[RMDB]
RNA sequence: GGGAACGACUCGAGUAGAGUCGAAAAGUCCUAAAUUUAGUGGACUUACGCUCAAAGCUUCCACCUGGAGUUGCGAGAAGAGACUAAUCAGGUUAGUCAUUGCUGGGUGCCCUGUCAUACGGCGUUUGCAAUGAUGAAAUUUAAAUAGUAUGAAUAUUCUUUGCAUAAGGUUCGCCUUAUGCAAAGAAAAAGAAACAACAACAACAAC
Reactivity to 2A3 in 0.01 (KOAc 150mM, MgCl2 10mM, bicine 150mM(pH8.5), 24C), signal-to-noise 4, nucleotides 027 to 156: g010u010c010c000u060a110a270a300u280u290u180a170g040u130g020g000a000c000u020u030a000c040g010c000u000c000a020a040a000g010c000u000u010c000c000a010c010c010u000g000g010a000g010u030u010g030c040g020a010g020a020a010g040a010g050a030c140u160a050a040u050c000a000g000g000u000u020a000g000u000c000a000u000u000g000c010u040g030g160g130u190g020c010c000c000u000g010u000c000a000u000a010c000g010g010c000g010u100u200u020g010c000a000a000u000g000a000u010g000a000a000a010u280u300u170a000a000a000u000a000g000u000a000u010g000a010a010u020a050u060
Source information: Conditions: 150 mM KOAc, 10 mM MgCl2 and 150 mM bicine (pH 8.5), 24 C. An RNA of 207 nucleotides, treated with 2A3 and read out base by base. Reactivities are given for positions 27 through 156. Source: RMDB library RSTRND, as collected in RNAgym.